[RMDB]
RNA sequence: GGGAACGACUCGAGUAGAGUCGAAAACAACACGUCCUCGUCGUACAGAGUGGUAACAUGUGUCACCACAUAUCCACGCUUGGGUACACGGGCUUGACCCAACCCCUUGGGCGGAUGGUGGCACAUGAAAAGAAGUAACACUUCGGUGUUACUUCAAGAAAGAUCUGACGUUCGCGUCAGAUCUUUCAAAAGAAACAACAACAACAAC
Reactivity to 2A3 in 0.01 (KOAc 150mM, MgCl2 10mM, bicine 150mM(pH8.5), 24C), signal-to-noise 2, nucleotides 027 to 156: c040a000a000c010a000c080g210u130c010c020u010c010g160u060c050g060u200a110c050a140g010a040g030u210g020g100u170a110a020c000a000u000g000u000g010u000c010a000c020c030a080c030a210u270a030u080c020c000a020c060g110c040u050u000g000g000g000u000a010c010a000c020g000g020g050c040u290u210g230a300c000c000c000a000a060c030c000c000c000u010u030g000g050g010c020g010g010a010u000g040g000u000g000g000c000a010c000a000u000g000a000a000a000a030g010a010a000g000u000a000a000c010a000c020u060u170c300g130g000u010g000u000u000a000c000u000u000c010a010a020